[RMDB]
RNA sequence: GGGAACGACUCGAGUAGAGUCGAAAAAUGAAGGUUCGCCUUCAUACUGUGGGGUCCUCCCAAGUAGCGAGGAUCGCAAGCACUGAAGCCUCCACGGUGUGAUGACCGGGAGCUAUGGGAGGACGGAGGCACCCGAAUCAGGGCAUUCGUGCCCUAAAUGUACAGUGCAAUUCGUUGCACUGUACAUAAAAGAAACAACAACAACAAC
Reactivity to DMS in 0.01 (KOAc 150mM, MgCl2 10mM, bicine 150mM(pH8.5), 24C), signal-to-noise 2, nucleotides 027 to 156: a060u010g000a030a030g060g020u000u000c300g020c010c030u000u000c020a030u000a020c140u000g080u000g010g000g000g000u000c000c000u000c000c000c000a060a170g030u000a020g030c000g000a190g050g000a010u000c000g030c030a170a300g000c030a030c010u010g020a060a060g000c000c000u010c000c010a300c000g040g090u000g010u010g000a180u000g000a100c070c010g000g010g000a210g010c030u000a010u010g040g020g000a090g020g010a070c020g010g020a000g050g010c060a190c000c000c000g000a110a130u000c100a060g010g030g040c010a160u000u000c190g000u000g020c010c000c000u000a000a010
Reactivity to 2A3 in 0.01 (KOAc 150mM, MgCl2 10mM, bicine 150mM(pH8.5), 24C), signal-to-noise 5, nucleotides 027 to 156: a000u010g010a020a000g050g040u080u170c180g150c030c000u000u000c000a000u040a060c090u110g100u270g150g020g060g010u010c010c000u000c010c020c010a100a110g280u050a000g020c020g030a160g070g000a010u000c010g000c040a050a070g000c000a000c010u000g000a040a000g000c000c000u000c000c000a040c030g010g000u020g020u030g020a130u260g080a130c170c150g000g000g020a010g000c000u020a010u020g000g010g010a010g000g000a000c000g000g000a010g000g010c000a030c010c000c000g040a030a060u160c070a080g000g010g000c000a010u040u070c190g090u080g010c000c010c000u050a110a190